[RMDB]
RNA sequence: GGGAACGACUCGAGUAGAGUCGAAAAGAUGCAUAGAUGUUACACUCAGAAAGAGAGUGAACAACUAGAAGAUGUGGAAGAACCAGUUUGGCUCUGGAGUCAAGAAUUCUCAAAACAGCUUUCUGAACCUGAAUCGCACGCAGUAAAGCUGGUGUUAUCAUGGGCUAAUGUUCGCAUUAGCCCAUGAAAAAGAAACAACAACAACAAC
Reactivity to 2A3 in 0.01 (KOAc 150mM, MgCl2 10mM, bicine 150mM(pH8.5), 24C), signal-to-noise 2, nucleotides 027 to 156: g040a010u120g050c070a050u020a040g030a030u000g030u000u130a170c010a010c000u000c020a000g250a020a150a020g240a040g000a040g000u000g010a010a000c000a010a010c000u000a000g020a130a030g030a100u120g030u080g160g130a070a080g010a050a030c010c030a010g040u040u080u020g020g000c030u020c040u030g010g000a000g050u010c000a040a040g030a030a040u060u000c000u000c000a000a100a050a190c010a000g000c010u020u020u040c000u040g040a060a040c010c000u050g050a050a030u170c030g020c020a000c030g020c000a020g000u230a010a010a010g030c020u000g020g070u060g020u050u040a010
Reactivity to DMS in 0.01 (KOAc 150mM, MgCl2 10mM, bicine 150mM(pH8.5), 24C), signal-to-noise 2, nucleotides 027 to 156: g040a070u000g020c020a300u010a100g000a110u000g000u010u000a140c030a030c010u020c000a140g000a150a060a180g000a230g000a030g030u000g000a100a040c010a020a070c060u020a040g010a070a130g000a080u000g030u010g000g010a130a060g020a040a080c030c050a210g050u000u000u000g010g060c000u000c010u010g030g010a300g000u000c040a080a120g000a100a150u000u000c020u000c020a050a030a070a130c010a040g030c020u000u000u000c020u000g010a040a080c080c010u050g000a090a090u000c070g000c050a040c070g000c010a060g000u000a020a030a040g000c000u000g020g020u000g020u000u020a170
This 207-nucleotide RNA was probed chemically with 2A3 and DMS. For 2A3, 703 sequencing reads were counted. The data come from the RNA Mapping Database (RMDB), library OK3TST. 2A3 adducts were read by reverse transcription with SuperScript II with manganese. The DMS profile rests on 2,299 reads. 2A3 is a SHAPE reagent: it acylates the 2'-hydroxyl of flexible nucleotides of all four kinds.